The record gives the reactivity of an RNA of 177 nucleotides to 2A3 and DMS.

[RMDB]
RNA sequence: GGGAACGACUCGAGUAGAGUCGAAAACAAAUGAGCCUAACUCUGCCACAUAUAUCAUAUAGGAGCUGGCAAAGGCUUGAUGACAAAGAGAUCUCUCUCAAGCCUUUCCCACAUCAGAGGCUGGCUUAGAUGGGAAAUAAUUCGUUAUUUCCCAUCUAAAAGAAACAACAACAACAAC
Reactivity to 2A3 in 0.01 (KOAc 150mM, MgCl2 10mM, bicine 150mM(pH8.5), 24C), signal-to-noise 9, nucleotides 027 to 126: c040a010a110a110u170g020a020g010c000c000u030a060a030c000u010c010u030g060c060c020a080c080a040u120a020u060a050u170c140a040u130a010u060a210g080g000a060g040c170u010g000g000c000a000a010a000g000g000c000u000u010g060a090u140g020a030c120a090a220a010g100a040g060a160u090c070u010c000u000c000u000c130a000a000g000c000c000u000u000u010c020c020c000a010c020a030u070c000a000g010a000g070g020c120u030g010g000c000u010u010
Reactivity to DMS in 0.01 (KOAc 150mM, MgCl2 10mM, bicine 150mM(pH8.5), 24C), signal-to-noise 6, nucleotides 027 to 126: c060a070a100a100u040g000a040g010c000c020u000a200a160c010u000c000u000g010c070c030a090c150a100u000a050u010a090u030c170a110u020a090u010a110g000g000a130g000c150u010g000g020c290a020a010a020g000g000c000u000u010g010a040u020g000a060c210a080a100a080g000a150g000a170u020c130u020c080u000c020u000c000a000a000g000c000c000u000u000u000c270c000c020a020c060a080u040c010a020g000a010g010g000c170u010g000g010c020u010u000